An RNA of 207 nucleotides, treated with 2A3 and read out base by base.
Reactivities are given for positions 27 through 156.
For 2A3, 678 sequencing reads were counted.
The RNA was probed in 150 mM KOAc, 10 mM MgCl2 and 150 mM bicine (pH 8.5) at 24 C.
It was measured as part of the RMDB library RNAMAK.
[RMDB]
RNA sequence: GGGAACGACUCGAGUAGAGUCGAAAAGCGUACUACACUUCGCUAACGAGCUUGGAUUUAUGUGAGUAAAGUCCCAAAUAGGACUUUGUCACAUUGUCAGCUCGGACCCGAAGUGUAUCGCAAAAUCAUAUAAACGGCUUCGGCCGUUUAUAUGAAACGUGUGCAAUUUCUUCGGAAAUUGCACACGAAAAGAAACAACAACAACAAC
Reactivity to 2A3 in 0.01 (KOAc 150mM, MgCl2 10mM, bicine 150mM(pH8.5), 24C), signal-to-noise 1, nucleotides 027 to 156: g000c020g020u100a040c000u010a000c010a000c000u000u000c010g000c010u000a110a100c000g000a000g020c090u250u250g230g000a200u300u300u090a020u050g030u030g010a090g140u110a000a000a000g000u030c020c020c060a090a300a110u300a120g010g000a000c000u000u000u020g030u010c000a000c000a000u000u010g040u000c000a010g000c000u020c000g000g000a000c000c000c000g040a000a000g000u010g000u000a000u040c000g000c000a000a030a000a160u010c030a010u000a000u020a010a000a000c000g000g030c070u070u160c300g170g000c000c000g000u000u000u000a000u000a000u000g000a040a000a010